[RMDB]
RNA sequence: GGGAACGACUCGAGUAGAGUCGAAAAGAUAUGGACCGAACUACACUCCGAAUAAGCGAAGAACUCGGAAACGAGGGAGCUUACUAGGAGUGCGGUCCUAAGUCAAAGCAAACGUUCGCGUUUGCAAGCCAGCAAAAUAGUUCGCUAUUUUGCUGGCAAAAGAAACAACAACAACAAC
Reactivity to 2A3 in 0.01 (KOAc 150mM, MgCl2 10mM, bicine 150mM(pH8.5), 24C), signal-to-noise 1, nucleotides 027 to 126: g040a020u080a050u120g000g000a000c020c000g000a000a000c000u160a040c070a000c000u000c010c000g020a120a030u020a010a010g050c020g190a300a010g020a150a050c010u000c010g040g000a100a030a030c000g000a010g030g000g070a000g000c010u030u030a010c020u030a010g000g000a000g000u000g000c020g000g000u030c010c000u000a060a000g000u030c040a100a120a000g000c000a000a000a030c000g040u070u110c300g030c030g140u020u010u000g000c000a010a020
Reactivity to DMS in 0.01 (KOAc 150mM, MgCl2 10mM, bicine 150mM(pH8.5), 24C), signal-to-noise 1, nucleotides 027 to 126: g070a020u000a300u000g000g000a020c000c000g010a060a080c120u010a300c010a020c000u000c010c000g020a090a120u000a010a030g000c000g010a040a160g000a070a160c020u000c010g000g010a160a060a170c010g020a000g000g000g000a060g010c000u000u000a020c020u000a300g010g020a000g070u000g000c030g010g000u000c010c020u000a020a040g000u020c030a060a170a140g000c000a010a000a010c000g030u000u030c260g030c010g010u000u000u000g020c020a060a040

Source information: This 177-nucleotide RNA was probed chemically with 2A3 and DMS. For DMS the reverse transcriptase was MarathonRT. 2A3 adducts were read by reverse transcription with SuperScript II with manganese. The reactions ran in a buffer of 150 mM KOAc, 10 mM MgCl2 and 150 mM bicine (pH 8.5), at 24 C. Source: RMDB library TTRDEL, as collected in RNAgym.